[RMDB]
RNA sequence: GGGAACGACUCGAGUAGAGUCGAAAAAAUCGUCGACGCAUCGACGACGGUCCUGCCAUGAGACCGUAACGAGGACAUGUCGCCUCGAAUGGCGUCGGGGAGCCGGCAGCUUACCCCAAGGAUCAGCAAAAGAAUGAAACGUUCGCGUUUCAUUCAAGACCAUUUAUGCGUUCGCGCAUAAAUGGUCAAAAGAAACAACAACAACAAC
Reactivity to 2A3 in 0.01 (KOAc 150mM, MgCl2 10mM, bicine 150mM(pH8.5), 24C), signal-to-noise 1, nucleotides 027 to 156: a000a010u020c030g000u000c000g000a010c100g120c190a200u060c040g010a010c020g000a010c000g010g000u000c010c000u040g010c000c000a040u070g040a030g000a000c000c030g030u040a020a010c010g000a010g010g000a060c070a130u180g090u180c130g030c000c030u020c000g000a000a000u030g000g000c030g000u090c050g010g020g000g010a060g210c010c000g060g060c030a010g030c040u010u090a160c000c000c000c000a010a040g110g020a060u230c060a040g070c060a020a000a010a020g000a000a030u000g000a000a000a000c000g070u060u140c300g060c040g090u000u010u010c000a000u000u000c010a000a000